[RMDB]
RNA sequence: GGGAACGACUCGAGUAGAGUCGAAAACGUCCUUCGGGACGAGUGAUUCCUAAGUCUGCGGGAGCAAACAAUUAAUGGAGAGUAGUCGGAAACGACUACUCGUUGAAAUUAUGUUUGCGAAGAACGCAGAUAUGGACUAUUUCUUCUUCGGAAGAAACUCUACAGUCAGAUUCGUCUGACUGUAGAGAAAAGAAACAACAACAACAAC
Reactivity to DMS in 0.01 (KOAc 150mM, MgCl2 10mM, bicine 150mM(pH8.5), 24C), signal-to-noise 2, nucleotides 027 to 156: c000g040u000c000c010u000u010c270g050g000g000a020c020g000a070g000u010g010a190u000u000c010c010u010a100a300g010u000c000u000g010c000g010g010g020a300g000c010a010a020a050c010a050a150u010u000a020a040u000g010g020a300g010a040g040u000a010g010u000c020g040g010a160a150a240c020g030a020c000u000a000c000u000c000g010u010u020g010a160a170a130u000u000a020u000g000u000u000u000g010c010g010a100a210g010a130a200c010g010c000a000g010a010u000a090u010g000g010a050c140u000a130u000u000u000c000u000u000c000u000u000c230g030g010a030a000g000a040a090a200
Reactivity to 2A3 in 0.01 (KOAc 150mM, MgCl2 10mM, bicine 150mM(pH8.5), 24C), signal-to-noise 2, nucleotides 027 to 156: c020g000u000c010c000u040u090c300g080g000g010a010c010g000a040g030u200g050a170u090u070c010c000u020a140a040g030u000c000u010g000c000g010g000g010a050g000c000a010a000a010c020a050a110u230u140a020a010u030g020g010a010g010a010g020u000a000g000u000c010g000g060a090a070a090c000g000a000c000u000a000c000u000c000g000u010u020g000a010a010a000u000u000a030u020g000u010u000u000g000c000g000a010a030g020a010a000c000g000c000a000g000a000u020a030u030g010g020a010c030u120a120u140u030u000c000u030u020c010u030u030c180g070g020a000a010g000a010a030a030
Chemical mapping of a 207-nucleotide RNA with DMS and 2A3. Values cover nucleotides 27 to 156. Conditions: 150 mM KOAc, 10 mM MgCl2 and 150 mM bicine (pH 8.5), 24 C.